[RMDB]
RNA sequence: GGGAACGACUCGAGUAGAGUCGAAAAGAAGAUGCCGUAUUGACUGUAUCAGCAUUAUUAGAAGGCGAAUAUGAUGAAGAAGAUGUUUAUAUUGGUGUUCCAGCAGUCAUCAAUAGAAACGGUAUUCGAUUACCGUCAUUUUCGAAUGACGGUAAUCAAAAGAAACAACAACAACAAC
Reactivity to DMS in 0.01 (KOAc 150mM, MgCl2 10mM, bicine 150mM(pH8.5), 24C), signal-to-noise 5, nucleotides 027 to 126: g010a090a110g010a030u000g010c030c010g010u000a080u010u010g010a060c030u000g000u020a130u010c100a050g010c070a020u000u020a070u030u000a070g010a080a090g020g000c060g000a090a070u020a070u020g000a070u010g020a070a080g000a070a100g000a110u020g000u010u000u010a080u020a050u010u000g010g020u010g000u010u010c060c070a100g000c070a030g000u000c000a020u000c080a060a030u030a050g010a060a050a010c010g000g010u010a070u010u010c100
Reactivity to 2A3 in 0.01 (KOAc 150mM, MgCl2 10mM, bicine 150mM(pH8.5), 24C), signal-to-noise 9, nucleotides 027 to 126: g160a050a030g070a030u060g000c000c010g010u040a110u050u160g040a060c020u020g030u100a060u140c020a020g070c020a030u020u080a030u070u060a110g050a160a040g120g030c050g040a050a020u160a080u120g130a050u100g060a010a100g050a080a030g070a070u120g040u070u130u000a110u040a050u040u030g050g000u050g060u110u070c060c030a030g000c020a000g050u020c010a010u010c020a030a090u080a080g110a040a110a000c010g030g030u040a070u040u120c060

This 177-nucleotide RNA was probed chemically with DMS and 2A3. It was measured as part of the RMDB library OK1LIB. The reactions ran in a buffer of 150 mM KOAc, 10 mM MgCl2 and 150 mM bicine (pH 8.5), at 24 C. Reactivities are rounded to 0.1 and cut off at 0 and 3. The 2A3 profile rests on 10,511 reads.